This 177-nucleotide RNA was probed chemically with 2A3 and DMS. Reactivities are given for positions 27 through 126. DMS adducts were read by reverse transcription with MarathonRT. For DMS, 2,418 sequencing reads were counted.

[RMDB]
RNA sequence: GGGAACGACUCGAGUAGAGUCGAAAAGAAGGUGAGGACGAGCAACCUUGCGGAGAACAUGUUUCGGCACAUGAGAAGCUUUCUACGGAGGUAUCCUGGGUAUAUGAGCCAUGCCCAUGCAGAUGAGCAUGGCCUCGACAUUCGUGUCGAGGCCAUGAAAAGAAACAACAACAACAAC
Reactivity to 2A3 in 0.01 (KOAc 150mM, MgCl2 10mM, bicine 150mM(pH8.5), 24C), signal-to-noise 2, nucleotides 027 to 126: g120a030a020g080g040u020g060a040g000g030a040c030g020a030g000c020a030a060c010c030u040u120g110c030g040g020a060g040a050a020c040a070u160g160u000u070u040c010g080g070c020a020c010a120u080g030a050g010a110a020g010c050u040u040u070c010u020a060c060g040g000a010g040g050u070a060u080c030c040u040g000g010g080u070a070u000a060u120g060a000g000c020c000a030u040g000c010c000c000a000u060g010c010a040g070a210u060g010a050g030
Reactivity to DMS in 0.01 (KOAc 150mM, MgCl2 10mM, bicine 150mM(pH8.5), 24C), signal-to-noise 3, nucleotides 027 to 126: g030a070a060g000g010u000g020a090g000g020a070c080g000a050g040c090a080a080c080c020u020u010g000c070g030g000a050g000a060a100c160a050u000g010u010u010u000c060g010g020c070a100c090a090u000g000a090g020a070a180g010c080u000u000u000c040u000a090c060g010g000a020g010g000u000a060u000c010c000u000g000g000g000u000a060u010a110u010g000a120g000c030c020a060u000g010c000c000c000a060u020g010c200a070g000a050u000g020a070g000